[RMDB]
RNA sequence: GGGAACGACUCGAGUAGAGUCGAAAAGCAGACACGUCCCUUACCAUAGGGACGUCUACGCUACAUACCAUUGUAGCAGGUGCAUAUGGUAAUGCACGUAGACGCAGAUAUGGUAAUCUGCGUGUCAAUUUAGGCUUCAUUUCGAUGAAGCCUAGAUAAAAGAAACAACAACAACAAC
Reactivity to DMS in 0.01 (KOAc 150mM, MgCl2 10mM, bicine 150mM(pH8.5), 24C), signal-to-noise 9, nucleotides 027 to 126: g010c160a120g000a010c010a010c000g010u000c010c020c020u000u010a110c210c150a080u020a020g000g000g000a030c000g010u000c000u000a010c020g010c060u000a080c010a020u010a070c080c070a060u030u000g000u000a040g010c090a110g010g010u010g000c010a020u020a050u020g020g010u010a070a030u000g010c300a040c010g010u000a000g000a000c000g010c050a040g000a040u000a050u020g010g000u020a100a040u010c030u010g000c010g000u000g000u000c000a120
Reactivity to 2A3 in 0.01 (KOAc 150mM, MgCl2 10mM, bicine 150mM(pH8.5), 24C), signal-to-noise 9, nucleotides 027 to 126: g130c090a030g000a000c000a000c010g010u010c010c000c020u020u050a250c080c050a150u180a060g030g000g030a020c000g000u000c000u000a000c020g050c070u000a010c000a010u050a070c020c040a040u030u050g040u050a080g050c120a110g140g160u120g030c020a030u060a030u220g140g020u180a140a010u020g000c010a000c010g000u000a000g000a000c010g000c010a000g030a060u040a030u160g210g030u110a070a050u010c010u020g000c000g000u000g000u000c000a000
An RNA of 177 nucleotides, treated with DMS and 2A3 and read out base by base. The DMS profile rests on 90,369 reads. The RNA was probed in 150 mM KOAc, 10 mM MgCl2 and 150 mM bicine (pH 8.5) at 24 C. Values cover nucleotides 27 to 126. Source: RMDB library OK1LIB, as collected in RNAgym.